[RMDB]
RNA sequence: GGGAACGACUCGAGUAGAGUCGAAAAGCCGGGUGGACGAGAAUACCUUGUCCGUGGGAAGGUAGAAGUAUCUGCCCCGCCUCUUGCAGGCUGAGAGGAGCCUCGUGUCCUCACCGAAGGCGGGGGCACCGAAAGGAUAGUUCGCUAUCCUUUCGGUAAAAGAAACAACAACAACAAC
Reactivity to DMS in 0.01 (KOAc 150mM, MgCl2 10mM, bicine 150mM(pH8.5), 24C), signal-to-noise 5, nucleotides 027 to 126: g000c010c010g000g010g010u000g010g010a000c000g020a030g010a300a220u010a130c150c010u010u010g000u000c020c070g020u010g000g000g020a100a110g000g000u000a070g000a070a120g010u000a050u010c080u000g000c010c000c000c040g000c010c000u000c080u000u010g030c130a090g010g010c130u000g010a120g000a060g000g000a100g000c040c060u010c190g010u000g010u000c020c030u010c030a100c100c040g000a070a040g010g010c010g010g000g000g010g020c090
Reactivity to 2A3 in 0.01 (KOAc 150mM, MgCl2 10mM, bicine 150mM(pH8.5), 24C), signal-to-noise 3, nucleotides 027 to 126: g030c010c000g030g000g030u160g000g010a000c000g000a010g040a190a220u260a270c020c010u010u020g030u020c030c000g020u060g020g030g010a190a100g060g000u110a050g070a150a040g070u090a100u110c060u120g050c000c000c000c010g000c010c010u050c070u020u170g070c120a060g000g010c040u060g060a070g000a030g100g070a050g050c030c030u120c070g090u150g060u090c000c000u000c010a050c000c040g000a050a020g000g000c000g030g000g010g000g030c020
Background
The record gives the reactivity of an RNA of 177 nucleotides to DMS and 2A3. The 2A3 profile rests on 4,178 reads. It was measured as part of the RMDB library OK2TRN.